[RMDB]
RNA sequence: GGGAACGACUCGAGUAGAGUCGAAAAUAAGCAAAAGACGACCACCUUUCCCGCUGACAAUAGCGUUAUCCCUCUGCACUUCGGUAAUAUGAGGGCACAGUAAAUCCCGCAAGGAUGAGAAUGUGAUUAAACAGUUACAGCUUCGGCUGUAACUGAACAUAAUCAGGGUGUUCGCACCCUGAUUAUGAAAAGAAACAACAACAACAAC
Reactivity to 2A3 in 0.01 (KOAc 150mM, MgCl2 10mM, bicine 150mM(pH8.5), 24C), signal-to-noise 3, nucleotides 027 to 156: u070a010a030g050c030a050a050a160a000g110a070c070g030a040c000c040a040c020c040u000u030u050c040c010c020g010c080u050g020a070c080a120a160u060a150g070c020g050u120u090a100u090c000c010c000u020c010u010g010c050a030c030u050u110c180g090g000u050a040a030u080a080u300g000a020g000g000g000c000a000c000a000g010u000a020a030a020u000c000c000c000g100c130a040a030g000g010a000u030g000a000g000a030a020u020g030u010g000a020u040u300a060a080a070c000a000g000u000u000a000c000a000g010c000u010u100c200g140g000c000u000g000u010a000a000c000u000g000a000a000
Reactivity to DMS in 0.01 (KOAc 150mM, MgCl2 10mM, bicine 150mM(pH8.5), 24C), signal-to-noise 2, nucleotides 027 to 156: u000a060a140g040c070a110a060a070a090g040a080c030g030a120c030c010a110c050c040u000u010u000c000c010c010g040c040u000g020a070c040a070a140u000a120g010c070g010u000u000a110u010c020c000c000u000c020u000g010c050a040c080u010u000c220g030g010u000a110a160u010a100u000g000a030g030g000g000c020a030c030a080g040u000a090a090a080u000c010c020c000g040c250a120a180g000g010a050u000g010a060g000a040a090u000g040u010g000a150u000u000a070a120a180c020a010g020u000u000a010c000a010g010c020u000u010c300g060g050c000u000g000u000a000a000c000u010g010a040a080

This 207-nucleotide RNA was probed chemically with 2A3 and DMS. Conditions: 150 mM KOAc, 10 mM MgCl2 and 150 mM bicine (pH 8.5), 24 C. The data come from the RNA Mapping Database (RMDB), library M2RFPK. The 2A3 profile rests on 2,112 reads. Values cover nucleotides 27 to 156.